RNA sequence: GGGAACGACUCGAGUAGAGUCGAAAACAUGCUAAUCGCGGCGUACGGAAACCAUCCAAUGUGACGGCUGCUGACUCUCUAUCCAUCCGAAACGUACGCUAGUCACCUGCCAUCCGAAACGUACGGAGGCUCUAGGCGACACGAUUGCGGACCGGAGCUACGAUCACCCUUUCGAGGGUGAUCGUAGAAAAGAAACAACAACAACAAC
Reactivity to 2A3 in 0.01 (KOAc 150mM, MgCl2 10mM, bicine 150mM(pH8.5), 24C), signal-to-noise 1, nucleotides 027 to 156: c080a060u180g000c060u150a000a060u080c060g000c110g030g030c000g040u030a000c040g000g190a070a070a120c050c020a120u290c000c040a160a040u150g050u080g120a010c020g050g040c000u080g000c000u010g000a030c060u060c000u010c050u090a060u170c080c040a000u020c010c080g040a210a060a000c040g020u030a000c030g020c030u010a020g000u010c030a020c040c000u030g030c020c050a300u000c040c000g120a120a070a120c160g050u270a130c020g020g010a000g000g000c050u070c030u020a000g000g000c000g010a000c000a000c010g080a070u030u090g000c010g020g000a030c030c090g040g000a000g030
Background
The record gives the reactivity of an RNA of 207 nucleotides to 2A3. Conditions: 150 mM KOAc, 10 mM MgCl2 and 150 mM bicine (pH 8.5), 24 C. The 2A3 profile rests on 454 reads. The data come from the RNA Mapping Database (RMDB), library OK3TST.